[RMDB]
RNA sequence: GGGAACGACUCGAGUAGAGUCGAAAAGAUAUGGACAUUCGACAUGAUCUAAGGAUCGGAAACGAUCCGAAGAUCAACAGCGAGAUGUCCUAAGUCAAAGGACUGGUCAGUUCGCUGACCAGUCCAAGCGAAUAUUACAGUUCGCUGUAAUAUUCGCAAAAGAAACAACAACAACAAC
Reactivity to DMS in 0.01 (KOAc 150mM, MgCl2 10mM, bicine 150mM(pH8.5), 24C), signal-to-noise 5, nucleotides 027 to 126: g000a030u010a300u010g000g000a020c000a000u010u000c000g020a090c090a270u000g010a000u000c000u010a040a300g000g010a010u010c020g010g000a070a150a250c010g020a000u000c000c000g010a170a040g000a000u000c000a020a040c300a180g000c020g000a040g010a010u000g020u000c000c000u020a040a100g000u000c040a070a110a200g010g000a010c000u000g000g000u000c000a020g010u010u010c250g000c000u000g000a010c000c010a000g010u000c000c000a010a030
Reactivity to 2A3 in 0.01 (KOAc 150mM, MgCl2 10mM, bicine 150mM(pH8.5), 24C), signal-to-noise 3, nucleotides 027 to 126: g010a020u090a060u150g010g000a000c000a020u020u010c030g050a080c130a100u110g000a000u010c000u020a050a020g010g010a000u000c000g010g000a090a070a020c010g000a000u020c000c000g000a010a000g000a000u010c000a000a000c020a030g050c010g020a160g010a250u010g000u000c000c000u010a110a040g020u010c060a110a090a090g020g000a010c000u000g000g000u010c010a000g010u050u180c280g030c150u020g000a000c000c000a000g000u000c000c000a000a000
This 177-nucleotide RNA was probed chemically with DMS and 2A3. The DMS profile rests on 4,598 reads. The data come from the RNA Mapping Database (RMDB), library TTRDEL. For DMS the reverse transcriptase was MarathonRT. The RNA was probed in 150 mM KOAc, 10 mM MgCl2 and 150 mM bicine (pH 8.5) at 24 C. For 2A3 the reverse transcriptase was SuperScript II with manganese.